[RMDB]
Annotation: Chemical mapping of a 177-nucleotide RNA with 2A3. The reactions ran in a buffer of 150 mM KOAc, 10 mM MgCl2 and 150 mM bicine (pH 8.5), at 24 C.
RNA sequence: GGGAACGACUCGAGUAGAGUCGAAAAAGUGGCAAGGUAUUACGGCAACGCCCUGCUCACGGGACUGGACGAAACCGACCCCAAGGCCGAAGCCUUUGCUCUCCUCUGCAACAACCCCCACGGAACCCCCUGGCUAUCGUUUCGACGAUAGCCAGGGAAAAGAAACAACAACAACAAC
Reactivity to 2A3 in 0.01 (KOAc 150mM, MgCl2 10mM, bicine 150mM(pH8.5), 24C), signal-to-noise 1, nucleotides 027 to 126: a020g050u060g020g010c010a010a030g140g010u030a090u290u170a100c120g010g000c010a140a030c060g000c000c000c010u030g040c060u010c000a070c040g000g000g030a070c120u100g000g000a000c000g050a130a050a020c000c010g060a070c000c020c000c000a080a040g000g000c000c000g020a050a010g000c000c000u050u020u030g020c000u000c010u000c020c020u080c070u000g070c060a040a030c030a010a070c070c030c000c000c000a020c040g000g050a020a040c010c000

For 2A3 the reverse transcriptase was SuperScript II with manganese.